[RMDB]
RNA sequence: GGGAACGACUCGAGUAGAGUCGAAAAGAAGGUCGAGUGCACGACCAGAGAGUGCGGUGAGUGACCGACAAAGAGUUCGAAUCGGAACGAACUACCGCAGACGAUCGACUGAAGAUCGAAGUGAGAAAGGGACUAUCGAUUUCGAUCGAUAGUCCCUAAAAGAAACAACAACAACAAC
Reactivity to 2A3 in 0.01 (KOAc 150mM, MgCl2 10mM, bicine 150mM(pH8.5), 24C), signal-to-noise 1, nucleotides 027 to 126: g000a000a000g000g000u000c000g090a090g050u090g070c150a000c230g000a100c010c000a000g000a000g000a000g000u050g010c000g100g000u040g130a130g000u000g050a030c000c070g000a040c010a020a070a180g050a030g040u130u260c070g090a020a110u110c020g000g000a000a050c070g000a020a070c040u010a000c000c000g000c040a000g050a000c040g000a020u000c000g030a050c210u200g010a120a040g000a050u000c000g000a000a000g100u080g060a060g160a060a110
Reactivity to DMS in 0.01 (KOAc 150mM, MgCl2 10mM, bicine 150mM(pH8.5), 24C), signal-to-noise 2, nucleotides 027 to 126: g070a050a020g010g000u000c000g000a300g020u050g000c080a210c080g000a040c060c040a010g020a130g040a070g010u000g000c000g000g000u000g000a100g000u030g000a200c010c010g070a100c000a040a120a270g060a130g000u010u030c070g000a120a110u050c000g000g000a110a130c090g000a080a000c050u000a030c000c000g050c000a020g000a100c060g000a000u040c050g000a200c180u000g000a060a110g040a130u000c000g000a230a050g000u010g000a130g000a060a040